Structure probing data (DMS and 2A3) for a 177-nucleotide construct. The reactions ran in a buffer of 150 mM KOAc, 10 mM MgCl2 and 150 mM bicine (pH 8.5), at 24 C. DMS adducts were read by reverse transcription with MarathonRT.
[RMDB]
RNA sequence: GGGAACGACUCGAGUAGAGUCGAAAAGAUAUGGAAUCACCCAGGGAGCUGUAUCUCGGAAACGAGAUAUACAGCAUCGAUCUGGCGUGAUUCCUAAGUCAAACAUUCCCCCUUCGGGGGGAAUGAACACAUGCUACAAGUUCGCUUGUAGCAUGUGAAAAGAAACAACAACAACAAC
Reactivity to DMS in 0.01 (KOAc 150mM, MgCl2 10mM, bicine 150mM(pH8.5), 24C), signal-to-noise 3, nucleotides 027 to 126: g010a030u000a300u010g010g010a010a000u010c000a000c010c000c000a000g010g000g010a040g020c010u010g030u000a040u000c000u000c000g010g000a130a100a190c010g010a020g000a070u010a080u000a060c020a010g030c000a290u000c190g010a050u030c010u000g000g010c300g020u000g000a010u000u000c000c000u000a010a090g010u000c010a120a120a300c020a020u000u000c000c000c000c000c010u000u010c240g060g010g030g000g010g000a010a000u000g000a080a190
Reactivity to 2A3 in 0.01 (KOAc 150mM, MgCl2 10mM, bicine 150mM(pH8.5), 24C), signal-to-noise 2, nucleotides 027 to 126: g020a000u040a010u100g000g000a000a000u010c000a000c000c010c010a000g070g040g030a150g000c000u000g010u020a010u040c010u020c000g000g010a020a030a000c000g010a000g020a000u070a040u040a120c000a000g010c020a050u300c070g060a100u030c000u010g000g020c170g050u000g000a010u000u040c010c010u000a010a000g000u010c030a000a070a080c000a000u000u000c000c000c000c000c070u030u180c270g050g000g000g000g020g000a000a000u000g000a030a000